[RMDB]
RNA sequence: GGGAACGACUCGAGUAGAGUCGAAAAUGUAGCAGCAGAAGAUACCUGAUUAUGAGGACGCAACCAAACUAAUGGAUAGAUUUUGCAAGUAAGCAACAUGGAAAAAGGCAGAAGGCAUAAGUCAGUGUUUAAUUCAUAUCGAUUUAUGAGUUUAUUCGUUGAUCUUUGGAUUCGUCCAAAGAUCAACAAAAGAAACAACAACAACAAC
Reactivity to DMS in 0.01 (KOAc 150mM, MgCl2 10mM, bicine 150mM(pH8.5), 24C), signal-to-noise 3, nucleotides 027 to 156: u000g030u000a100g020c010a110g010c020a090g030a140a040g020a070u010a100c000c000u000g000a090u000u000a200u000g020a120g020g000a160c130g020c170a070a110c030c030a030a060a130c200u010a090a090u010g020g010a110u010a070g000a200u000u000u000u000g020c080a110a080g020u000a040a120g010c010a040a050c030a030u020g000g010a060a060a010a100a100g020g030c010a020g010a040a020g020g000c000a060u000a040a060g030u000c030a080g010u000g020u010u000u010a030a040u000u000c000a010u000a010u000c080g010a220u010u000u000a010u010g000a070g030u000u000u010a100u010u000c080
Reactivity to 2A3 in 0.01 (KOAc 150mM, MgCl2 10mM, bicine 150mM(pH8.5), 24C), signal-to-noise 4, nucleotides 027 to 156: u120g010u040a020g000c050a010g000c030a010g020a120a000g010a080u130a300c000c010u020g000a030u020u050a070u200g000a000g000g020a020c070g020c080a020a010c010c000a020a010a020c050u160a090a030u080g060g020a030u050a070g100a070u110u110u130u240g050c060a090a020g010u060a020a000g010c010a010a000c010a040u020g000g000a010a030a020a080a070g040g010c000a000g000a010a010g000g010c000a000u030a040a000g020u020c030a000g010u010g030u110u070u120a030a050u020u020c000a000u020a050u130c040g090a060u080u090u020a020u020g000a020g010u010u080u050a070u060u110c050

This 207-nucleotide RNA was probed chemically with DMS and 2A3. Conditions: 150 mM KOAc, 10 mM MgCl2 and 150 mM bicine (pH 8.5), 24 C. For 2A3, 2,586 sequencing reads were counted. The data come from the RNA Mapping Database (RMDB), library OK3TST.